Source: RMDB library OK2TRN, as collected in RNAgym. This 177-nucleotide RNA was probed chemically with DMS. For DMS the reverse transcriptase was MarathonRT. The DMS profile rests on 1,835 reads.
RNA sequence: GGGAACGACUCGAGUAGAGUCGAAAAUGUGGCGCCGGCGGUUGUCGCCGGUGCGGCCGUAGACCAGGCCGCCGGCACUGACAGCCGGCCGACCAGGGUGGCCUCGCCUAAACUUGCGCCGAGCCCCAACACCUAUGGGGUUCGCCCCAUAGGUGUUAAAAGAAACAACAACAACAAC
Reactivity to DMS in 0.01 (KOAc 150mM, MgCl2 10mM, bicine 150mM(pH8.5), 24C), signal-to-noise 2, nucleotides 027 to 126: u000g010u010g000g030c010g010c020c000g010g000c010g000g010u000u010g020u000c030g010c010c020g010g030u020g020c080g020g030c000c020g000u000a120g020a100c250c140a190g020g000c010c010g010c010c000g010g000c010a200c300u010g010a020c080a050g000c010c000g020g010c000c000g010a060c040c110a130g020g000g000u000g010g010c070c120u000c040g000c020c000u020a050a040a090c100u000u000g000c030g000c040c000g000a080g000c020c000c000c170